An RNA of 177 nucleotides, treated with 2A3 and DMS and read out base by base. For 2A3, 41,997 sequencing reads were counted. For DMS, 88,241 sequencing reads were counted. Values are in units of 0.01, from 0 to 300, in steps of 10. Source: RMDB library OK1LIB, as collected in RNAgym. Values cover nucleotides 27 to 126.
RNA sequence: GGGAACGACUCGAGUAGAGUCGAAAAGUUCGGCGAAACGCCGUCUGCCUGGGUCCGAAAGAUUUCUUGUCGCAAAUCUACAAGACAUUGGUUAACGUAUGCUCCACUUUAAGGGCCGCUCGCCGGGUCAAGGGAGGGUCUUCGGGCCUUUCCUUGAAAAAGAAACAACAACAACAAC
Reactivity to 2A3 in 0.01 (KOAc 150mM, MgCl2 10mM, bicine 150mM(pH8.5), 24C), signal-to-noise 9, nucleotides 027 to 126: g040u050u040c010g010g000c010g040a120a040a030c080g010c010c010g010u010c010u020g030c000c010u020g040g000g010u000c010c000g050a060a030a010g020a010u010u010u000c010u020u070g060u050c040g020c090a020a010a050u020c000u010a010c020a030a000g010a010c010a010u010u070g030g020u040u090a040a010c020g030u040a020u060g020c010u010c010c010a030c010u040u050u080a050a050g010g010g000c000c000g010c010u010c000g000c000c010g020g000g020
Reactivity to DMS in 0.01 (KOAc 150mM, MgCl2 10mM, bicine 150mM(pH8.5), 24C), signal-to-noise 9, nucleotides 027 to 126: g010u020u010c010g010g010c000g010a050a090a270c160g010c020c010g010u000c030u010g000c010c010u000g020g010g010u000c010c020g000a110a130a060g000a030u000u000u000c030u010u020g010u020c150g000c180a040a050a050u020c020u000a050c120a120a060g000a030c060a070u010u010g000g000u000u010a070a060c070g010u020a040u010g010c020u000c010c040a100c120u020u020u030a090a100g000g000g010c000c010g000c120u010c020g000c020c010g010g000g000